The data come from the RNA Mapping Database (RMDB), library OK3TST.
Structure probing data (2A3 and DMS) for a 207-nucleotide construct.
For 2A3 the reverse transcriptase was SuperScript II with manganese.
For DMS the reverse transcriptase was MarathonRT.
For DMS, 1,895 sequencing reads were counted.
The 2A3 profile rests on 2,814 reads.
The reactions ran in a buffer of 150 mM KOAc, 10 mM MgCl2 and 150 mM bicine (pH 8.5), at 24 C.
Reactivities are given for positions 27 through 156.

RNA sequence: GGGAACGACUCGAGUAGAGUCGAAAAAGGAUGGGAAAGCAUGCUUCGAUGAAGGAUGGGAAAGCAUGCAAGAACAAGGCCAAUCCGAUGCGUACGGAAACCAUCCCGCCAGCAAGCUACGCCUCCUGUGGAUGGGAAAGCAUGCAUGUGUACGUACCUCUAACUUGAGGUUCGCCUCAAGUUAGAGAAAAGAAACAACAACAACAAC
Reactivity to 2A3 in 0.01 (KOAc 150mM, MgCl2 10mM, bicine 150mM(pH8.5), 24C), signal-to-noise 4, nucleotides 027 to 156: a000g020g010a020u060g020g010g050a120a040a040g020c010a000u030g000c020u030u020c050g250a220u170g090a080a050g040g030a060u090g010g030g020a020a000a020g010c010a000u020g000c020a000a060g080a010a030c070a030a010g090g020c040c050a010a050u020c010c000g000a040u070g010c010g010u000a020c010g000g020a040a030a020c010c000a010u010c020c000c000g000c010c010a020g000c030a040a020g000c020u040a030c140g090c000c020u020c000c020u140g070u170g120g030a130u190g020g000g060a070a050a020g000c010a010u050g010c010a080u080g040u010g000u060a000c000g000u020a010c000
Reactivity to DMS in 0.01 (KOAc 150mM, MgCl2 10mM, bicine 150mM(pH8.5), 24C), signal-to-noise 1, nucleotides 027 to 156: a060g000g030a050u000g040g010g030a190a130a300g040c000a010u030g010c010u000u000c030g020a200u020g010a190a190g000g000a060u010g010g020g000a070a060a040g020c040a030u000g010c080a030a040g000a070a050c110a120a090g020g020c010c060a030a080u000c010c030g020a110u000g000c000g020u020a060c040g030g000a120a120a080c010c000a030u010c000c010c000g000c040c050a100g040c050a060a060g030c000u000a000c030g000c010c010u000c010c010u000g060u000g000g030a110u010g010g000g010a040a040a040g010c040a110u000g000c040a120u000g000u010g040u000a030c030g010u000a100c110